[RMDB]
RNA sequence: GGGAACGACUCGAGUAGAGUCGAAAAGUAUGGUCAAUGUAGUGAACUUUGUGGUGUAUUACAUGGAUUUAUGCCAAUAGUAAUUUGUUUUAUAUAGGUAUAUAAUCUAUAGUCUAAAUUAGGGGAACUCUGAAUAGUAUUUCGAUACUAUUCAGAGAAAAGAAACAACAACAACAAC
Reactivity to 2A3 in 0.01 (KOAc 150mM, MgCl2 10mM, bicine 150mM(pH8.5), 24C), signal-to-noise 4, nucleotides 027 to 126: g070u040a050u140g020g010u040c030a070a020u100g060u080a110g030u040g100a060a040c030u060u220u160g140u190g070g040u050g000u060a110u070u060a040c050a010u030g010g010a010u000u040u040a040u070g010c000c000a030a030u030a070g070u040a070a120u170u090u210g040u030u230u080u000a070u000a060u020a040g000g000u010a070u000a020u020a130a070u000c010u000a020u060a120g010u000c010u110a060a170a180u090u120a060g000g000g010g070a040a030
Reactivity to DMS in 0.01 (KOAc 150mM, MgCl2 10mM, bicine 150mM(pH8.5), 24C), signal-to-noise 3, nucleotides 027 to 126: g000u020a030u020g030g020u000c020a040a040u000g010u010a010g030u010g000a090a040c060u000u020u020g010u020g020g010u000g010u020a040u020u000a030c050a000u010g000g000a030u010u010u030a000u020g010c010c020a080a140u020a140g020u010a040a030u000u020u060g000u010u010u000u000a070u000a080u010a100g000g000u000a060u060a080u060a050a020u010c020u000a010u000a080g000u020c020u010a040a050a070u040u040a070g020g010g010g010a100a170
Record summary
Structure probing data (2A3 and DMS) for a 177-nucleotide construct. The DMS profile rests on 4,523 reads. The RNA was probed in 150 mM KOAc, 10 mM MgCl2 and 150 mM bicine (pH 8.5) at 24 C. For 2A3, 1,313 sequencing reads were counted. DMS adducts were read by reverse transcription with MarathonRT.